RNA sequence: GGGAACGACUCGAGUAGAGUCGAAAAUCGCCGUCCGACCACCAGCGGCCGAACCAGGCCGGGCGCGCCACCGGCAGCAGACGCCAGGUGGAGCACAACUGCUCGCCCUCGGUCUCGUUGCCGAGCACUGCUGCUAUAUCUUCGGAUAUAGCAGCAGAAAAGAAACAACAACAACAAC
Reactivity to 2A3 in 0.01 (KOAc 150mM, MgCl2 10mM, bicine 150mM(pH8.5), 24C), signal-to-noise 1, nucleotides 027 to 126: u060c010g030c040c010g040u070c020c030g040a100c040c000a030c000c010a060g000c000g050g010c000c000g010a030a000c040c030a040g020g040c000c000g000g030g000c040g040c000g020c000c000a030c020c000g030g010c000a010g010c010a030g060a170c090g060c060c020a000g040g000u050g050g010a010g000c040a030c030a230a200c130u160g000c010u030c030g100c010c010c000u090c130g000g020u010c030u000c100g030u060u060g010c000c000g020a030g060c080a010
Reactivity to DMS in 0.01 (KOAc 150mM, MgCl2 10mM, bicine 150mM(pH8.5), 24C), signal-to-noise 2, nucleotides 027 to 126: u000c060g010c050c030g020u000c020c020g000a050c020c030a110c080c060a080g050c030g000g020c000c010g000a070a100c060c110a090g000g020c080c000g040g000g010c070g010c090g020c000c070a100c070c020g020g030c010a060g030c150a050g030a080c070g020c020c100a090g050g010u000g020g000a000g030c000a080c120a100a130c200u000g020c000u000c010g000c120c040c020u000c100g030g000u000c080u000c080g030u010u000g000c040c010g000a080g060c200a160
Conditions: 150 mM KOAc, 10 mM MgCl2 and 150 mM bicine (pH 8.5), 24 C. The record gives the reactivity of an RNA of 177 nucleotides to 2A3 and DMS. DMS adducts were read by reverse transcription with MarathonRT. The DMS profile rests on 1,216 reads. Source: RMDB library OK2TST, as collected in RNAgym. As a SHAPE reagent, 2A3 marks flexible, mostly unpaired nucleotides at the ribose 2'-OH.